Chemical mapping of a 177-nucleotide RNA with DMS and 2A3. DMS (dimethyl sulfate) methylates the pairing face of unpaired adenines and cytosines. The DMS profile rests on 1,687 reads. Source: RMDB library OK1LIB, as collected in RNAgym. The RNA was probed in 150 mM KOAc, 10 mM MgCl2 and 150 mM bicine (pH 8.5) at 24 C. For 2A3, 6,174 sequencing reads were counted.
RNA sequence: GGGAACGACUCGAGUAGAGUCGAAAACAAUAUCCAAAUAUUAGAUGCGCCUUUCGGGGAAUUAUGUUUCCUACUCAACCCGGGGCCCAAAUACUUGUCACCCACAAGAUGUACUUCUCUUGGUACAGCGAAUUUAGUAUUUCGAUACUAAAUUCGCAAAAGAAACAACAACAACAAC
Reactivity to DMS in 0.01 (KOAc 150mM, MgCl2 10mM, bicine 150mM(pH8.5), 24C), signal-to-noise 2, nucleotides 027 to 126: c140a020a100u050a080u100c070c030a060a050a080u060a060u010u020a060g000a150u010g010c120g020c010c030u000u010u020c020g020g050g000g000a060a170u000u050a060u030g000u000u000u000c010c010u000a090c120u020c100a120a230c000c000c000g000g000g000g020c010c030c000a060a050a040u010a040c090u000u010g000u010c010a060c000c000c070a140c120a060a040g010a130u000g010u000a010c020u000u000c090u030c120u060u030g010g010u000a040c130a110
Reactivity to 2A3 in 0.01 (KOAc 150mM, MgCl2 10mM, bicine 150mM(pH8.5), 24C), signal-to-noise 9, nucleotides 027 to 126: c070a020a110u080a080u190c080c050a020a110a050u250a080u140u190a090g090a150u090g040c040g030c070c010u040u190u230c030g010g010g020g060a050a120u180u070a110u220g080u040u090u060c020c030u040a080c020u030c080a060a090c000c000c000g000g000g000g020c020c000c000a040a060a020u110a040c010u020u040g020u050c030a040c050c020c000a050c010a050a020g040a100u090g010u040a030c020u080u110c030u010c040u110u120g040g000u070a030c020a010